[RMDB]
RNA sequence: GGGAACGACUCGAGUAGAGUCGAAAACGAUGCCCACACCACACACUCCGCCCCGCGCCUGGUGAACCGACCCGGGUGGCUAGCAACUAUCAGUUCAAUACACAAAGCCGUCAUCGACAGGCAACUCAGUUCCAUUAUUCUUCGGAAUAAUGGAACUAAAAGAAACAACAACAACAAC
Reactivity to 2A3 in 0.01 (KOAc 150mM, MgCl2 10mM, bicine 150mM(pH8.5), 24C), signal-to-noise 8, nucleotides 027 to 126: c020g050a050u140g010c000c000c000a010c000a020c010c010a030c000a000c000a010c020u020c020c020g020c020c000c010c000g030c000g010c000c000u030g020g030u080g030a070a040c030c010g050a060c020c010c000g020g000g010u020g040g010c020u040a030g020c020a010a060c020u080a080u160c010a020g010u100u050c050a100a060u100a140c070a010c010a080a100a020g010c000c010g030u050c020a150u060c030g040a020c010a020g020g020c010a020a050c060u090c080
Reactivity to DMS in 0.01 (KOAc 150mM, MgCl2 10mM, bicine 150mM(pH8.5), 24C), signal-to-noise 4, nucleotides 027 to 126: c110g020a110u020g010c000c010c020a100c080a090c060c040a040c070a050c050a090c020u010c030c040g030c040c020c020c040g010c090g000c010c010u000g000g020u010g010a060a110c100c050g030a120c110c030c040g000g010g000u010g000g010c050u000a100g010c060a050a050c050u010a060u010c070a030g020u000u010c090a070a080u030a020c170a070c120a070a090a070g000c010c030g010u000c010a070u020c040g000a070c040a070g020g000c040a080a060c120u010c090